RNA sequence: GGGAACGACUCGAGUAGAGUCGAAAAGCUUCGAAGGCACAGGAGUCUGACUGCCUUUUCCUGAGCACUUUGGCAAAUAGGGCAGGCCACAGUGGCCUAAUUAACCCACAAUGCAGCUGUCAAAUAUCAAAGAAGGUUUUGUGAAUUAGCCUGGCACCACCCCAAAUAAUUUCGAUUAUUUGGGGUGAAAAGAAACAACAACAACAAC
Reactivity to DMS in 0.01 (KOAc 150mM, MgCl2 10mM, bicine 150mM(pH8.5), 24C), signal-to-noise 2, nucleotides 027 to 156: g010c010u000u000c090g020a060a060g020g030c000a240c040a090g000g010a160g000u000c030u000g020a110c040u000g010c000c020u000u000u000u000c030c040u000g030a050g010c030a090c100u000u020u000g020g010c040a020a040a130u000a070g020g060g140c040a090g020g040c000c010a080c110a140g030u000g000g030c020c030u000a030a040u010u000a090a100c030c000c030a140c150a040a120u000g020c110a070g050c050u000g030u010c020a060a060a100u000a120u020c090a040a060a150g000a060a110g000g000u020u010u000u000g030u000g010a120a070u000u000a090g020c000c030u000g000g000c010a100c090
Reactivity to 2A3 in 0.01 (KOAc 150mM, MgCl2 10mM, bicine 150mM(pH8.5), 24C), signal-to-noise 3, nucleotides 027 to 156: g010c020u100u090c100g040a020a010g030g000c010a010c010a050g070g060a160g080u120c070u070g040a110c050u010g020c000c020u010u030u030u040c000c020u030g040a010g040c030a070c080u080u070u050g050g000c010a040a080a160u090a160g040g000g000c030a010g010g010c000c000a090c060a070g100u120g120g020c000c000u020a050a040u110u050a040a020c000c020c020a030c020a050a040u150g050c010a020g050c040u020g000u040c000a080a050a030u140a040u060c050a050a060a080g160a060a090g030g020u010u090u130u110g040u030g040a050a080u140u120a070g030c000c000u020g000g020c000a010c160
Structure probing data (DMS and 2A3) for a 207-nucleotide construct. Reactivities are rounded to 0.1 and cut off at 0 and 3. 2A3 adducts were read by reverse transcription with SuperScript II with manganese. Values cover nucleotides 27 to 156. It was measured as part of the RMDB library OK3TST.